[RMDB]
This 177-nucleotide RNA was probed chemically with 2A3.
RNA sequence: GGGAACGACUCGAGUAGAGUCGAAAACGCUUGCGUGACGAGGACACGGGGUUUCUGUGGCUGCGUGAAUCCGACUAAUCACACCUUCGGAAGGAUGAAACGUACUGUAACUCUCAUGUUAGUUGGAGCGUCGAGUGGACUUCGGUCCACUCGACGCAAAAGAAACAACAACAACAAC
Reactivity to 2A3 in 0.01 (KOAc 150mM, MgCl2 10mM, bicine 150mM(pH8.5), 24C), signal-to-noise 1, nucleotides 027 to 126: c000g020c000u000u210g010c000g010u000g000a080c130g030a000g000g080a020c000a020c180g170g000g000g100u010u090u010c070u170g160u000g010g000c000u000g000c000g010u000g010a050a000u010c010c000g000a010c000u040a030a030u180c080a000c000a080c120c040u050u050c140g080g010a020a020g090g030a030u090g130a000a000a000c040g050u050a040c040u170g060u100a000a050c010u000c000u000c020a070u060g030u110u030a040g000u030u040g050g070a050